The record gives the reactivity of an RNA of 177 nucleotides to 2A3 and DMS. Conditions: 150 mM KOAc, 10 mM MgCl2 and 150 mM bicine (pH 8.5), 24 C. DMS adducts were read by reverse transcription with MarathonRT.

RNA sequence: GGGAACGACUCGAGUAGAGUCGAAAAACGCCCUAAACGAUGUAUGCUAGUUGUUGGGGUGCUAGUCAUCUCAGUAAUGCAGCUAACGCAUUAAGCAUACCGCCUGGGGAGUACGGUCGCAAGAUUACGAGAAGACUUUGUUCGCAAAGUCUUCUCGAAAAGAAACAACAACAACAAC
Reactivity to 2A3 in 0.01 (KOAc 150mM, MgCl2 10mM, bicine 150mM(pH8.5), 24C), signal-to-noise 1, nucleotides 027 to 126: a000c020g010c010c000c000u070a060a040a000c050g020a030u140g000u040a010u040g000c020u040a040g100u030u060g040u040u030g060g000g010g000u020g040c000u060a070g040u210c000a010u010c010u000c020a010g020u060a040a020u090g000c000a020g070c050u090a150a000c060g000c020a010u130u000a070a000g000c020a000u010a050c030c020g000c000c030u070g010g000g000g000a040g030u040a040c040g020g060u080c030g010c050a000a060g040a130u080u160a020
Reactivity to DMS in 0.01 (KOAc 150mM, MgCl2 10mM, bicine 150mM(pH8.5), 24C), signal-to-noise 1, nucleotides 027 to 126: a050c080g000c000c000c000u000a030a060a060c070g020a090u000g050u000a000u000g010c030u000a140g010u000u020g020u010u020g000g000g010g040u000g030c050u010a120g030u020c000a020u000c010u010c020a030g000u000a120a010u000g010c010a110g020c110u000a130a230c300g010c000a020u030u010a080a060g000c000a020u010a020c000c010g020c070c050u010g000g000g000g000a070g030u000a090c100g010g010u010c010g000c140a020a060g010a090u000u030a090